[RMDB]
RNA sequence: GGGAACGACUCGAGUAGAGUCGAAAAGAUCGCGGCCGCCCGUGCAUCGGCGACUUGAUCGAACGAAAGGUCCGGGGCACCAAGAAGCUUUUUCAUGUCGGACGCCUAGACGCGGACACCGAGGGACGACUUCUAAGAGUUUCGACUCUUAGAAGUCAAAAGAAACAACAACAACAAC
Reactivity to DMS in 0.01 (KOAc 150mM, MgCl2 10mM, bicine 150mM(pH8.5), 24C), signal-to-noise 4, nucleotides 027 to 126: g000a060u010c040g020c140g010g010c060c050g000c050c030c060g010u010g010c140a100u000c100g040g000c010g030a030c040u010u000g010a050u000c040g010a080a110c090g000a070a100a110g000g000u010c030c020g000g010g010g020c100a070c030c060a070a090g000a100a140g000c100u000u010u000u000u000c040a100u010g020u010c030g010g020a120c070g020c010c020u000a120g010a110c090g020c020g000g000a080c100a060c010c030g000a060g010g000g020a120c170
Reactivity to 2A3 in 0.01 (KOAc 150mM, MgCl2 10mM, bicine 150mM(pH8.5), 24C), signal-to-noise 2, nucleotides 027 to 126: g040a010u070c020g000c040g050g020c060c060g050c050c060c000g050u060g020c010a080u090c030g030g000c010g040a040c020u080u150g030a070u080c030g020a070a060c030g100a080a040a040g080g000u010c030c030g000g030g010g010c040a040c060c030a030a040g050a090a020g080c000u150u090u010u100u260c070a060u130g050u080c010g040g000a040c020g040c010c010u050a060g030a070c060g000c010g040g000a010c020a010c050c010g020a060g040g000g020a020c060
This 177-nucleotide RNA was probed chemically with DMS and 2A3.
2A3 adducts were read by reverse transcription with SuperScript II with manganese.
The reactions ran in a buffer of 150 mM KOAc, 10 mM MgCl2 and 150 mM bicine (pH 8.5), at 24 C.
For 2A3, 2,654 sequencing reads were counted.
For DMS the reverse transcriptase was MarathonRT.